[RMDB]
Background:
Structure probing data (DMS and 2A3) for a 207-nucleotide construct. For 2A3 the reverse transcriptase was SuperScript II with manganese. The DMS profile rests on 3,149 reads. DMS (dimethyl sulfate) methylates the pairing face of unpaired adenines and cytosines. The RNA was probed in 150 mM KOAc, 10 mM MgCl2 and 150 mM bicine (pH 8.5) at 24 C.
RNA sequence: GGGAACGACUCGAGUAGAGUCGAAAAUGCUCGAUACGCUGGGCUCGAUGGUAGUUGUCAGCUCGGACUGAAGCGCGCACGGUCCCGGAGCUUGGAUUUACGAGAGUAGAGCCUGUGCUGAAGCGCGCACGGCAACCGAAAGGUGCGACAUACACAACUAUAUAUCCGGGUUCGCCCGGAUAUAUAGAAAAGAAACAACAACAACAAC
Reactivity to DMS in 0.01 (KOAc 150mM, MgCl2 10mM, bicine 150mM(pH8.5), 24C), signal-to-noise 2, nucleotides 027 to 156: u000g030c000u000c030g000a180u010a080c080g000c000u000g000g010g020c010u000c030g020a180u000g040g030u010a190g010u010u000g030u000c040a090g000c000u000c010g000g000a030c000u000g000a030a050g030c030g050c010g000c010a300c020g050g030u010c000c040c130g080g000a030g000c040u000u020g040g000a130u020u000u000a060c010g020a270g010a130g040u000a230g020a020g010c040c000u000g010u000g010c000u000g030a120a130g020c010g020c110g070c020a120c030g000g010c010a070a190c030c010g000a090a110a190g030g000u000g010c020g000a080c070a120u010a120c080a080c020a110a300
Reactivity to 2A3 in 0.01 (KOAc 150mM, MgCl2 10mM, bicine 150mM(pH8.5), 24C), signal-to-noise 3, nucleotides 027 to 156: u090g010c020u020c030g040a040u070a170c030g000c000u010g010g030g000c000u000c000g030a050u040g050g060u020a050g000u040u100g110u110c020a000g000c010u000c060g000g000a000c010u020g040a180a060g040c030g000c020g020c080a030c000g000g000u030c050c060c050g210g030a020g000c060u160u200g140g020a110u180u240u260a050c040g030a000g000a020g110u050a010g010a000g000c050c000u000g000u010g000c000u020g020a100a020g030c030g000c010g000c020a040c060g040g000c050a090a110c030c030g050a130a070a000g060g000u020g010c030g060a010c020a050u240a050c110a010c020a210a130